RNA sequence: GGGAACGACUCGAGUAGAGUCGAAAAAUAUACCAGCAGUUAUCGGGUAUAAGUUUGCUAUUACAGUUGAUGAGAUGUCAGAUGUUUUAGAUUCUGCUAGAUUCCCAGAUUCUCUGGCCGUGGAUUAAAUCCAUCAUGGAUUCGUCCAUGAUGGAUUAAAAGAAACAACAACAACAAC
Reactivity to DMS in 0.01 (KOAc 150mM, MgCl2 10mM, bicine 150mM(pH8.5), 24C), signal-to-noise 5, nucleotides 027 to 126: a100u010a060u000a080c010c020a090g010c130a070g010u010u000a050u000c050g010g000g020u000a050u000a070a070g010u000u000u010g010c030u000a040u000u000a040c040a040g000u000u000g010a050u000g010a160g000a100u010g010u000c020a030g000a040u000g020u000u000u010u010a090g000a080u000u000c030u000g000c050u000a070g000a240u000u010c020c010c000a160g010a120u010u000c030u000c030u010g000g010c040c080g010u000g010g000a110u000u000a060
Reactivity to 2A3 in 0.01 (KOAc 150mM, MgCl2 10mM, bicine 150mM(pH8.5), 24C), signal-to-noise 2, nucleotides 027 to 126: a000u070a010u020a010c000c040a000g040c020a050g060u140u060a060u090c010g020g000g110u070a130u000a070a050g040u030u230u100g060c010u010a030u030u050a030c010a020g020u050u000g070a060u050g040a110g030a230u280g070u040c020a010g050a130u010g010u020u060u010u010a020g000a040u110u030c010u020g010c020u000a050g030a180u020u040c000c010c000a000g010a040u030u040c040u000c010u030g060g000c040c020g060u070g030g000a030u060u210a030
An RNA of 177 nucleotides, treated with DMS and 2A3 and read out base by base. Reactivities are rounded to 0.1 and cut off at 0 and 3. The DMS profile rests on 6,013 reads. 2A3 adducts were read by reverse transcription with SuperScript II with manganese. The 2A3 profile rests on 1,506 reads. Source: RMDB library OK2TST, as collected in RNAgym.